[RMDB]
RNA sequence: GGGAACGACUCGAGUAGAGUCGAAAAACCCUGCGGGGGUCCCCAGGCCGUCAACUUCCGGUGCCAGACGUUGGUACGUCAGGGUCGAGCACAAUGCGCUGCCGCCCGCUGCCGAUAUUCUGGGGACAAAUAAGCUAACUUUCGAGUUAGCUUAUUUAAAAGAAACAACAACAACAAC
Reactivity to DMS in 0.01 (KOAc 150mM, MgCl2 10mM, bicine 150mM(pH8.5), 24C), signal-to-noise 9, nucleotides 027 to 126: a080c010c000c010u010g010c060g010g000g000g000g010u000c010c000c000c020a030g010g010c050c010g000u010c100a100a090c130u020u010c100c040g000g010u010g010c080c120a100g000a050c100g010u000u010g010g020u010a060c080g010u010c040a190g000g000g010u020c040g010a170g010c000a040c040a120a100u050g010c210g010c160u000g010c010c020g000c010c010c000g000c050u010g010c030c020g000a060u020a060u020u010c010u000g000g000g000g000a020c030
Reactivity to 2A3 in 0.01 (KOAc 150mM, MgCl2 10mM, bicine 150mM(pH8.5), 24C), signal-to-noise 9, nucleotides 027 to 126: a000c010c000c000u010g010c070g020g020g000g000g000u020c010c000c000c000a010g030g050c010c000g060u110c070a120a070c090u160u080c070c020g050g010u050g090c050c030a050g020a090c080g050u070u090g040g030u090a050c100g030u030c140a080g010g010g030u150c060g040a090g060c010a020c020a070a300u300g050c080g030c130u020g010c020c000g010c000c000c000g040c020u030g010c010c010g020a030u020a070u160u090c010u020g010g000g010g000a010c010

Conditions: 150 mM KOAc, 10 mM MgCl2 and 150 mM bicine (pH 8.5), 24 C. This 177-nucleotide RNA was probed chemically with DMS and 2A3. For DMS the reverse transcriptase was MarathonRT. 2A3 adducts were read by reverse transcription with SuperScript II with manganese.